[RMDB]
RNA sequence: GGGAACGACUCGAGUAGAGUCGAAAAUGAUUGGGAUAAUCAAACAGGGUUCACUCUCUGCAAGACCUUGGAGGCCGUCGGAGUGGGCUUGAUUAUUCAACAAGAGGAUCAGCGCAGGGGAUGGACAAGGAAUGAUAGUGUUCGCACUAUCAUUCCUAAAAGAAACAACAACAACAAC
Reactivity to 2A3 in 0.01 (KOAc 150mM, MgCl2 10mM, bicine 150mM(pH8.5), 24C), signal-to-noise 1, nucleotides 027 to 126: u100g010a050u020u080g040g000g030a030u040a150a020u100c020a030a100a070c040a160g140g000g040u040u040c010a010c010u010c010u000c010u000g000c000a040a020g030a010c000c000u040u070g170g060a110g070g000c070c010g070u100c050g190g000a110g040u200g030g020g000c000u000u000g030a010u000u190a090u050u140c030a020a060c050a080a050g010a010g050g050a190u020c030a070g010c000g050c100a020g000g030g000g000a010u030g050g000a000c030a040
Reactivity to DMS in 0.01 (KOAc 150mM, MgCl2 10mM, bicine 150mM(pH8.5), 24C), signal-to-noise 2, nucleotides 027 to 126: u010g010a100u000u000g000g000g000a180u020a060a010u010c000a040a100a160c210a120g020g000g030u000u010c010a000c040u000c010u000c020u000g040c070a120a260g030a050c010c000u010u020g000g020a170g050g020c030c040g010u000c080g000g010a090g060u000g010g000g000c020u020u010g000a040u000u000a020u000u000c060a080a130c100a090a100g000a000g030g000a030u000c030a120g000c300g010c050a020g000g000g000g000a090u010g060g020a100c100a090

Chemical mapping of a 177-nucleotide RNA with 2A3 and DMS. 2A3 adducts were read by reverse transcription with SuperScript II with manganese. For DMS the reverse transcriptase was MarathonRT. The data come from the RNA Mapping Database (RMDB), library OK2TRN.